[RMDB]
RNA sequence: GGGAACGACUCGAGUAGAGUCGAAAACAUAAAAAUGGGGCAUUGUCCAUGUGCCGACUUUGCAGAGGAACGGCGCAAACAAAGGCAAAUUCGACUGACGGAGGAACGGAGUCACCAAGAAUUUAAUUCUUUAUUAACGUUUCGACGUUAAUAAAGAAAAAGAAACAACAACAACAAC
Reactivity to DMS in 0.01 (KOAc 150mM, MgCl2 10mM, bicine 150mM(pH8.5), 24C), signal-to-noise 4, nucleotides 027 to 126: c110a070u050a030a040a060a080a110u010g010g000g000g020c030a070u010u020g000u020c050c110a080u010g030u000g020c020c030g000a090c070u010u020u030g000c180a110g030a050g010g010a080a110c080g010g000c050g010c010a070a120a040c080a030a080a080g010g030c030a040a070a150u010u010c050g020a070c030u000g000a050c100g000g010a080g000g010a070a110c060g000g010a070g010u010c020a060c060c040a080a070g010a040a110u020u000u020a030a120u020
Reactivity to 2A3 in 0.01 (KOAc 150mM, MgCl2 10mM, bicine 150mM(pH8.5), 24C), signal-to-noise 9, nucleotides 027 to 126: c030a030u260a100a140a020a030a030u130g020g020g040g010c030a030u020u050g030u030c060c030a030u040g010u000g010c000c000g040a070c030u060u090u240g050c090a050g030a030g160g040a170a040c010g010g000c000g000c000a030a120a050c030a020a060a020g040g000c000a020a030a090u070u050c020g030a030c040u030g020a030c030g050g030a040g030g010a070a020c040g020g020a050g030u010c010a010c040c010a040a030g050a070a050u070u110u120a070a090u020